Source: RMDB library ARCHII, as collected in RNAgym. An RNA of 207 nucleotides, treated with 2A3 and read out base by base. The 2A3 profile rests on 744 reads.
[RMDB]
RNA sequence: GGGAACGACUCGAGUAGAGUCGAAAACUUGUGUUUCGAAAGGACAUGGUGGCCAGGUUAAUUGCCUCGGGUACGGUCACAACGUGAAGGAUGUUCCAAUGGGCAAUCCGCAGCCAAGCCCCUACGUGUGGUGUCCGUAAUACAGACAUUCCAUAUGGAAUUUCACUAGCUUCGGCUAGUGAAAUUCAAAAGAAACAACAACAACAAC
Reactivity to 2A3 in 0.01 (KOAc 150mM, MgCl2 10mM, bicine 150mM(pH8.5), 24C), signal-to-noise 1, nucleotides 027 to 156: c050u090u060g030u020g000u050u000u000c010g060a100a080a050g010g040a090c040a120u090g010g080u070g060g000c110c090a080g040g010u050u120a130a040u100u080g010c000c000u120c090g050g000g020u030a000c000g010g000u020c020a010c020a150a120c080g050u050g040a080a000g060g040a080u180g020u060u000c090c000a130a100u230g030g000g010c000a020a070u040c000c030g000c040a030g020c030c000a020a080g000c010c010c000c000u050a050c020g000u140g060u040g050g080u010g010u000c000c010g000u020a050a030u150a110c030a010g020a010c010a000u060u100c050c000a040u040a130u250g070